Chemical mapping of a 177-nucleotide RNA with DMS. The DMS profile rests on 842 reads. For DMS the reverse transcriptase was MarathonRT. The RNA was probed in 150 mM KOAc, 10 mM MgCl2 and 150 mM bicine (pH 8.5) at 24 C.

RNA sequence: GGGAACGACUCGAGUAGAGUCGAAAAUGGACAGCGGGCGGCCCCAGUCGUUGUUCACCCUGGACCACCGGCUGAUCGAGCAGGGCCGGCUGGUCAAGGAAAAGCGGGUCAACCUGCGCGCCGGUCAUGAGUAAGGAGCAUUCGUGCUCCUUACUCAAAAAGAAACAACAACAACAAC
Reactivity to DMS in 0.01 (KOAc 150mM, MgCl2 10mM, bicine 150mM(pH8.5), 24C), signal-to-noise 1, nucleotides 027 to 126: u000g000g010a020c020a070g010c010g000g000g000c160g000g010c050c000c000c060a300g000u010c010g000u000u010g000u000u000c030a100c110c030c020u000g000g040a110c010c010a110c000c000g000g010c010u000g030a140u010c080g000a140g020c080a090g040g000g050c000c030g000g010c240u000g010g010u000c050a060a050g010g010a110a040a130a040g000c040g010g000g000u000c090a090a150c030c000u020g010c020g010c040g040c040c000g020g010u000c110a120